Source information: Structure probing data (DMS and 2A3) for a 177-nucleotide construct. For 2A3, 2,531 sequencing reads were counted. 2A3 adducts were read by reverse transcription with SuperScript II with manganese. Values cover nucleotides 27 to 126. Source: RMDB library M2PK50, as collected in RNAgym. Conditions: 150 mM KOAc, 10 mM MgCl2 and 150 mM bicine (pH 8.5), 24 C.
RNA sequence: GGGAACGACUCGAGUAGAGUCGAAAAGCUUUUCAGUUCGCUGAAAAGCAAAGAAUAGAUCGAAAGAUCAACGCAGAAACGGAGCGAAAUCCGUAACAAAAAAAACACCGAGGUUCGCCUCGGUGAAGCUCUUAUUGUUGUUCGCAACAAUAAGAGCAAAAGAAACAACAACAACAAC
Reactivity to DMS in 0.01 (KOAc 150mM, MgCl2 10mM, bicine 150mM(pH8.5), 24C), signal-to-noise 1, nucleotides 027 to 126: g000c010u000u000u000u000c000a000g000u000u000c160g030c000u000g000a000a000a000a000g020c000a030a030a080g010a140a170u010a140g000a020u040c000g000a180a050a150g000a010u000c000a150a300c100g000c030a130g000a100a100a020c030g050g000a000g000c000g000a010a120a040u000c000c010g000u000a020a060c060a020a000a000a150a140a030a100a190c000a010c000c000g000a010g000g000u000u010c200g010c020c000u010c010g000g010u000g000a040a040
Reactivity to 2A3 in 0.01 (KOAc 150mM, MgCl2 10mM, bicine 150mM(pH8.5), 24C), signal-to-noise 2, nucleotides 027 to 126: g000c000u020u000u000u000c010a040g020u020u140c180g040c080u000g000a010a000a000a010g010c020a000a030a010g000a080a080u220a060g020a010u010c020g020a100a040a000g000a010u020c000a000a020c000g000c010a020g220a060a150a000c000g020g000a000g020c040g150a100a010a030u000c010c000g000u080a040a020c070a140a030a010a020a000a000a000a000c000a010c010c000g000a000g040g000u080u080c180g060c050c000u010c010g000g000u000g000a000a000